[RMDB]
The record gives the reactivity of an RNA of 207 nucleotides to 2A3. Source: RMDB library OK3TST, as collected in RNAgym.
RNA sequence: GGGAACGACUCGAGUAGAGUCGAAAACUCCUGGAAGCUUUAUCACAGAGCUCUGGACCAGGCUGCCAAGUGGUUCCAGGCCCUGUGUGGUGAACCUGCUUCUCCCAGCAUGGACAGGCUACCAGUGACCUCCUUGGACUUCAUCUUCUUGGCUCCAUCCAUGCUAAAACUUCGGUUUUAGCAUGGAAAAAGAAACAACAACAACAAC
Reactivity to 2A3 in 0.01 (KOAc 150mM, MgCl2 10mM, bicine 150mM(pH8.5), 24C), signal-to-noise 2, nucleotides 027 to 156: c030u030c020c000u000g010g010a030a020g010c010u150u180u150a090u130c000a000c000a040g020a000g020c070u040c010u270g000g010a020c000c000a050g080g080c110u180g030c060c020a080a070g050u000g020g010u300u020c000c000a000g010g030c010c000c000u040g010u010g000u030g000g020u100g040a050a070c010c000u000g030c010u080u030c010u080c030c010c010a010g020c000a020u210g010g030a060c030a010g020g000c000u070a050c020c000a030g010u080g170a050c000c050u020c020c000u040u080g050g010a060c000u090u070c160a120u050c040u300u020c020u020u010g000g000c000u020c050c010a030